Structure probing data (2A3 and DMS) for a 177-nucleotide construct. For 2A3, 1,410 sequencing reads were counted. Reactivities are given for positions 27 through 126. For DMS, 2,696 sequencing reads were counted. The data come from the RNA Mapping Database (RMDB), library OK2TST. The RNA was probed in 150 mM KOAc, 10 mM MgCl2 and 150 mM bicine (pH 8.5) at 24 C.
RNA sequence: GGGAACGACUCGAGUAGAGUCGAAAACUACGACCAGUUGGGAGAGAUGUUCAGCGCUGGUACUCUGCUCCUACCCGCGGCCCUGCGGCUAACUGCCGCCGUUCUGCCUUGCGUGGCCUCCCCCCUGGGUAGGUGUUACAUUCGUGUAACACCUACCAAAAGAAACAACAACAACAAC
Reactivity to 2A3 in 0.01 (KOAc 150mM, MgCl2 10mM, bicine 150mM(pH8.5), 24C), signal-to-noise 1, nucleotides 027 to 126: c020u040a060c050g060a060c000c020a040g040u090u100g140g030g000a050g000a000g000a060u090g090u110u040c030a040g000c050g010c100u050g100g000u060a070c030u040c030u080g050c020u040c000c010u000a090c010c000c020g030c000g060g030c000c010c020u030g010c020g020g000c020u040a060a060c000u060g000c030c000g000c000c010g060u070u000c030u060g040c020c020u080u140g080c080g140u150g050g000c010c010u000c000c040c000c000c000c000u010g000
Reactivity to DMS in 0.01 (KOAc 150mM, MgCl2 10mM, bicine 150mM(pH8.5), 24C), signal-to-noise 2, nucleotides 027 to 126: c050u000a100c060g010a110c080c050a080g000u010u000g020g000g000a070g010a070g000a060u000g000u010u010c040a100g020c090g030c060u000g010g020u000a050c050u000c030u010g000c020u000c010c030u000a090c050c040c020g020c090g020g000c040c090c040u000g010c030g020g010c010u000a050a100c270u000g020c010c040g020c000c060g000u000u000c040u000g000c020c020u010u010g010c070g010u000g030g010c040c020u010c010c010c000c000c000c070u020g000